[RMDB]
RNA sequence: GGGAACGACUCGAGUAGAGUCGAAAAGCGAAUGACAAAGAAGCAGUAUCAAGCUCGUUCACAGGCUUUGGCGAGAGCUAAGCGGUUUGUUGUGAAUGCCAGCAGAGGCGGCGGAACAGGCCCAACGAAACAGACCUUCCGCAACGAUGAGGUCAUCCUAGAUCAGGACAUUCGUGUCCUGAUCUAGAAAAGAAACAACAACAACAAC
Reactivity to 2A3 in 0.01 (KOAc 150mM, MgCl2 10mM, bicine 150mM(pH8.5), 24C), signal-to-noise 1, nucleotides 027 to 156: g070c030g070a110a070u070g060a030c050a040a150a020g040a100a040g040c050a000g020u060a070u260c090a030a000g010c000u010c030g070u100u040c060a070c030a140g070g000c000u080u020u110g040g000c000g010a030g010a010g050c010u030a030a000g000c000g080g060u110u120u080g060u030u110g010u010g030a100a010u080g020c020c020a020g050c000a000g000a000g160g010c020g020g000c020g010g010a000a060c010a030g050g000c050c000c000a000a070c080g080a090a110a000c000a030g050a090c000c020u040u060c020c040g000c020a040a040c050g010a030u100g030a000g000g050u010c010a030u070c000
Reactivity to DMS in 0.01 (KOAc 150mM, MgCl2 10mM, bicine 150mM(pH8.5), 24C), signal-to-noise 1, nucleotides 027 to 156: g010c020g060a140a060u000g020a060c040a110a070a100g000a120a040g010c030a170g080u010a020u020c070a110a140g000c030u000c040g060u010u000c050a110c060a130g030g000c010u000u070u020g050g000c020g010a230g030a230g060c040u000a100a200g040c010g030g000u000u000u000g030u020u000g000u010g000a130a180u010g020c000c010a070g040c060a090g050a100g000g010c000g010g000c000g000g000a060a010c050a160g010g020c020c050c030a090a270c170g000a010a080a030c120a160g000a020c000c020u000u010c060c000g000c020a130a080c040g040a100u000g000a190g020g000u030c000a100u000c000

Background:
The record gives the reactivity of an RNA of 207 nucleotides to 2A3 and DMS. DMS adducts were read by reverse transcription with MarathonRT.